[RMDB]
RNA sequence: GGGAACGACUCGAGUAGAGUCGAAAAGAUAUGGAUCAUUAAGGGAGCUGCUUCGGAAACGAAACAGCGAGGAUCUUACUGAUCCUAAGUCAAAACCCAGGGUGGACGUUCGCGUCCACCCUGGGAAGUAUUACUAGCGGUUCGCCGCUAGUAAUACAAAAGAAACAACAACAACAAC
Reactivity to DMS in 0.01 (KOAc 150mM, MgCl2 10mM, bicine 150mM(pH8.5), 24C), signal-to-noise 1, nucleotides 027 to 126: g020a020u010a300u000g000g000a010u000c000a000u000u000a020a010g000g000g020a040g020c010u000g000c060u010u000c010g020g010a040a090a100c020g000a010a000a030c000a010g010c000g010a050g030g000a030u010c000u010u000a000c090u000g010a000u000c000c000u010a000a040g020u010c020a110a080a120a160c010c010c000a010g010g000g030u000g010g000a010c030g020u000u010c230g010c030g020u010c000c000a000c000c000c000u000g000g020g000a000a020
Reactivity to 2A3 in 0.01 (KOAc 150mM, MgCl2 10mM, bicine 150mM(pH8.5), 24C), signal-to-noise 1, nucleotides 027 to 126: g050a010u020a020u100g000g010a010u020c000a010u000u030a050a020g020g010g050a030g050c000u020g010c020u010u000c000g050g000a120a060a050c010g000a000a000a030c000a010g000c050g020a010g030g000a010u000c000u000u000a010c020u010g020a020u000c000c010u000a060a050g060u010c030a030a040a040a250c000c000c000a000g030g030g010u010g000g020a030c070g070u100u130c300g060c040g140u120c000c030a010c000c020c000u010g000g020g010a010a000
This 177-nucleotide RNA was probed chemically with DMS and 2A3. DMS adducts were read by reverse transcription with MarathonRT. 2A3 adducts were read by reverse transcription with SuperScript II with manganese.